[RMDB]
The data come from the RNA Mapping Database (RMDB), library OK2TST.
Chemical mapping of a 177-nucleotide RNA with 2A3 and DMS.
DMS adducts were read by reverse transcription with MarathonRT.
For DMS, 4,179 sequencing reads were counted.
2A3 adducts were read by reverse transcription with SuperScript II with manganese.
Conditions: 150 mM KOAc, 10 mM MgCl2 and 150 mM bicine (pH 8.5), 24 C.
High 2A3 reactivity points to a flexible backbone, as in loops and unpaired stretches.

RNA sequence: GGGAACGACUCGAGUAGAGUCGAAAAUGGGAGGAAGAAACUCACCAGAGAAGGCAAUUCGUAGUUUAUCUAAUCUUUGGUGGGCUGCACUUAUCGUCUUCAGUGGUAUUGCGAUUUGGUGGUUAGGGCAUGACUAAAUCUUCGGAUUUAGUCAUGCAAAAGAAACAACAACAACAAC
Reactivity to 2A3 in 0.01 (KOAc 150mM, MgCl2 10mM, bicine 150mM(pH8.5), 24C), signal-to-noise 3, nucleotides 027 to 126: u060g020g000g020a070g030g010a090a030g030a080a090a040c020u020c020a010c000c000a010g010a000g030a040a020g050g000c030a030a070u120u090c110g090u120a100g050u030u110u100a110u070c030u050a120a090u010c040u030u040u020g000g000u010g020g020g000c020u040g000c010a010c040u080u060a030u080c040g040u000c020u080u070c030a070g020u060g090g020u090a070u050u060g060c030g060a060u010u010u120g030g000u010g010g000u040u070a070g070g020
Reactivity to DMS in 0.01 (KOAc 150mM, MgCl2 10mM, bicine 150mM(pH8.5), 24C), signal-to-noise 4, nucleotides 027 to 126: u000g000g010g010a110g010g010a100a090g020a080a080a080c020u000c020a040c010c020a030g000a070g010a040a070g010g010c140a060a070u010u000c170g010u000a070g010u000u010u000a040u000c060u000a070a090u010c050u000u000u000g000g000u010g000g000g000c080u000g020c110a060c090u010u010a090u010c050g000u000c060u000u000c050a130g040u000g010g010u000a050u010u000g000c060g000a070u000u000u000g010g010u000g020g020u010u010a130g000g010